[RMDB]
RNA sequence: GGGAACGACUCGAGUAGAGUCGAAAACUGUAGUCCCAGCUACUUGAGAGGCUGAGGUAGGAGAAUCACUUGAACCUGGGAGGCAGAGGUUGCAAUGAACUAAGAUUGCACCACUGCACUCCAGCCUGGGUGACAGAGCGAGACUCCCGUCUCCAAACUAUAGUACGUAGUUCGCUACGUACUAUAGAAAAGAAACAACAACAACAAC
Reactivity to 2A3 in 0.01 (KOAc 150mM, MgCl2 10mM, bicine 150mM(pH8.5), 24C), signal-to-noise 3, nucleotides 027 to 156: c040u060g020u060a000g060u050c000c000c000a010g030c000u030a050c020u160u170g140a090g010a010g200g020c070u120g020a060g070g090u110a050g010g000a030g030a040a020u040c010a000c040u020u040g020a030a010c000c010u010g020g000g010a030g000g000c010a000g030a020g040g000u170u100g000c000a000a020u030g030a190a050c130u150a220a070g110a160u020u000g000c000a000c000c000a010c000u010g000c030a110c090u010c030c000a000g060c000c020u060g030g020g010u020g020a040c030a050g060a030g100c080g030a000g020a030c010u000c010c020c000g040u030c030u000c010c010a070a040a040
Reactivity to DMS in 0.01 (KOAc 150mM, MgCl2 10mM, bicine 150mM(pH8.5), 24C), signal-to-noise 2, nucleotides 027 to 156: c030u030g040u000a110g010u020c020c000c000a110g020c030u010a050c050u000u010g000a060g020a160g020g030c060u000g030a050g000g050u030a060g020g000a080g000a150a190u000c020a000c050u000u000g010a050a070c060c020u000g020g000g020a090g040g000c000a020g000a090g020g020u000u010g060c030a010a010u000g010a110a180c150u000a090a120g030a110u000u000g010c010a090c000c000a080c000u000g010c010a030c020u000c060c010a040g020c080c010u000g000g020g000u010g000a110c130a120g020a060g020c030g010a080g010a200c030u000c010c020c000g000u000c000u000c010c020a060a070a250
This 207-nucleotide RNA was probed chemically with 2A3 and DMS.
The 2A3 profile rests on 2,274 reads.
The RNA was probed in 150 mM KOAc, 10 mM MgCl2 and 150 mM bicine (pH 8.5) at 24 C.
For DMS the reverse transcriptase was MarathonRT.
It was measured as part of the RMDB library OK3TST.